Chemical mapping of a 207-nucleotide RNA with DMS and 2A3.
Source: RMDB library M2RFOK, as collected in RNAgym.
Values cover nucleotides 27 to 156.
The reactions ran in a buffer of 150 mM KOAc, 10 mM MgCl2 and 150 mM bicine (pH 8.5), at 24 C.
RNA sequence: GGGAACGACUCGAGUAGAGUCGAAAAGCGGGGCUUGAAACGCGGGUAGCGCGCACGCCCGGCGAAGAAGUUCGCAUACGCGGUGUGCUGGUCCCGAAGUGUCUGCUGCAACGGCACGCUCGACACCUAGAACAUACCGUAUUCGUACGGUAUGUAACUAGUCAUGAAAGUUCGCUUUCAUGACUAGAAAAGAAACAACAACAACAAC
Reactivity to DMS in 0.01 (KOAc 150mM, MgCl2 10mM, bicine 150mM(pH8.5), 24C), signal-to-noise 3, nucleotides 027 to 156: g000c040g020g000g020g050c000u020u010g020a070a120a050c040g010c010g020g020g050u000a130g040c040g020c100g030c010a040c040g000c010c000c030g040g010c010g030a020a070g000a160a160g000u000u000c000g020c020a130u010a300c030g020c050g100g020u000g030u010g000c040u000g030g020u000c010c010c010g010a060a060g020u000g010u000c020u000g000c020u000g010c040a190a200c170g000g000c000a080c120g000c030u000c050g000a100c030a030c010c020u000a220g000a130a090c010a020u000a000c000c000g030u010a050u000u000c270g030u000a010c000g000g010u020a000u010g010u000a010a110
Reactivity to 2A3 in 0.01 (KOAc 150mM, MgCl2 10mM, bicine 150mM(pH8.5), 24C), signal-to-noise 8, nucleotides 027 to 156: g060c020g000g000g010g010c010u060u100g110a100a070a010c060g010c020g020g050g080u170a050g050c040g000c010g000c060a010c010g000c000c000c000g000g000c030g000a010a000g050a060a030g190u020u010c000g000c010a030u080a300c060g040c150g020g000u000g000u000g000c010u030g010g020u030c000c000c010g000a060a010g010u020g030u010c020u030g020c010u040g010c020a170a090c040g100g000c030a010c060g000c000u050c040g010a000c010a020c020c020u060a060g060a150a010c000a000u000a000c000c000g010u000a020u030u090c230g040u030a000c000g000g000u000a000u000g000u000a000a010